[RMDB]
RNA sequence: GGGAACGACUCGAGUAGAGUCGAAAAGAUCAGUUUCACAUGUCAGGGAUUCGUGCUGCGUUGGCCUGAUAUUAUAUGGCACAACGGACGUGAGUGUAACAUCACGGCUUGUACUCAUAAAGGUGGAUCUCUGCCCAGGAUUCGUCCUGGGCGGGGGAAAAGAAACAACAACAACAAC
Reactivity to 2A3 in 0.01 (KOAc 150mM, MgCl2 10mM, bicine 150mM(pH8.5), 24C), signal-to-noise 9, nucleotides 027 to 126: g050a090u120c060a020g040u020u070u070c070a080c020a050u110g050u100c050a040g040g010g020a050u070u070c030g030u060g070c060u070g020c020g020u030u030g030g030c000c000u020g040a020u010a020u060u110a080u030a040u090g020g000c040a030c010a220a030c040g030g040a030c030g020u020g030a040g010u110g060u090a050a040c030a080u050c020a010c030g020g000c010u030u040g040u030a040c030u020c080a040u120a080a110a030g090g010u050g020g060a080
Reactivity to DMS in 0.01 (KOAc 150mM, MgCl2 10mM, bicine 150mM(pH8.5), 24C), signal-to-noise 9, nucleotides 027 to 126: g000a070u020c070a090g000u010u010u010c050a080c100a070u020g010u010c050a060g000g000g000a080u010u010c040g020u010g010c050u010g000c030g020u000u000g000g000c010c000u000g010a110u020a080u020u030a090u030a040u020g010g010c020a070c020a010a020c070g010g010a100c070g010u000g000a040g010u010g010u020a070a070c120a090u000c060a050c060g000g000c060u000u000g010u010a030c030u010c020a040u020a050a080a100g010g010u010g000g000a080

Chemical mapping of a 177-nucleotide RNA with 2A3 and DMS. For DMS, 71,862 sequencing reads were counted. DMS adducts were read by reverse transcription with MarathonRT. The data come from the RNA Mapping Database (RMDB), library OK1LIB. Reactivities are given for positions 27 through 126.